[RMDB]
RNA sequence: GGGAACGACUCGAGUAGAGUCGAAAAGAUAUGGAGAAGCUUUGAUCGUUCCCAUCUAUGAAGUCGGAAACGAUGGAGAUGGGACGGGAGCUUCUCCUAAGUCAAAACGCUCCGUUCGCGGAGCGAAGUACUUUGAAAUGUUCGCAUUUCAAAGUACAAAAGAAACAACAACAACAAC
Reactivity to 2A3 in 0.01 (KOAc 150mM, MgCl2 10mM, bicine 150mM(pH8.5), 24C), signal-to-noise 5, nucleotides 027 to 126: g010a020u080a050u140g000g010a010g000a010a010g000c030u160u180u130g180a200u300c020g050u230u210c000c010c020a010u000c000u040a300u090g050a040a010g020u000c010g000g040a110a060a070c010g000a010u020g000g020a020g000a020u010g000g010g000a000c000g010g010g010a000g000c000u010u000c000u000c010c000u000a000a000g010u000c020a000a020a070a090c020g000c000u000c010c000g030u060u060c300g020c020g150g000a010g000c000g000a010a010
Reactivity to DMS in 0.01 (KOAc 150mM, MgCl2 10mM, bicine 150mM(pH8.5), 24C), signal-to-noise 2, nucleotides 027 to 126: g010a040u000a300u010g000g000a010g000a020a020g000c000u000u000u000g000a130u010c020g010u000u010c000c000c000a000u000c000u000a180u020g000a100a230g010u000c000g000g000a130a090a200c020g010a000u000g000g000a030g000a020u000g000g010g010a000c040g000g000g000a010g000c000u000u000c000u000c010c000u000a010a080g000u000c030a080a090a120a160c030g000c000u000c010c000g010u000u000c220g030c030g020g010a020g030c000g000a010a060